[RMDB]
RNA sequence: GGGAACGACUCGAGUAGAGUCGAAAACCAUGAAGACAAGUGAGAAACCACCUUCUGUCUACAGAAGGCAACAAUCCUGAAUAAACCUGGAAAUCUUUGUCUGACUUCAGACAGCUGAGUCUAAUCGCCACCUAUACUGGUUCGCCAGUAUAGGUGGAAAAGAAACAACAACAACAAC
Reactivity to 2A3 in 0.01 (KOAc 150mM, MgCl2 10mM, bicine 150mM(pH8.5), 24C), signal-to-noise 2, nucleotides 027 to 126: c020c020a000u080g170a030a000g000a020c010a080a000g000u000g060a050g060a100a050a000c050c020a020c010c010u000u050c010u020g070u050c020u020a030c030a040g000a040a020g010g020c000a000a000c000a010a070u030c020c030u030g040a090a130u170a140a110a060c040c070u020g020g060a060a120a150u040c030u000u040u050g010u000c020u010g070a100c000u150u150c060a030g000a100c010a050g030c060u060g020a010g010u000c020u030a030a130u060c050g010
Reactivity to DMS in 0.01 (KOAc 150mM, MgCl2 10mM, bicine 150mM(pH8.5), 24C), signal-to-noise 1, nucleotides 027 to 126: c000c000a170u000g020a180a040g000a020c030a030a020g010u000g000a050g050a120a040a160c110c110a100c010c040u000u010c060u020g020u000c110u000a040c060a050g000a090a000g000g020c060a020a030c210a130a100u010c010c000u000g000a130a090u000a030a010a100c200c040u000g000g000a060a120a070u010c110u020u020u000g010u000c010u000g030a110c040u000u000c020a000g010a060c210a100g000c080u000g000a050g010u000c010u000a090a030u000c060g000
The data come from the RNA Mapping Database (RMDB), library RFMREP.
The record gives the reactivity of an RNA of 177 nucleotides to 2A3 and DMS.
DMS adducts were read by reverse transcription with MarathonRT.
The 2A3 profile rests on 1,270 reads.
Conditions: 150 mM KOAc, 10 mM MgCl2 and 150 mM bicine (pH 8.5), 24 C.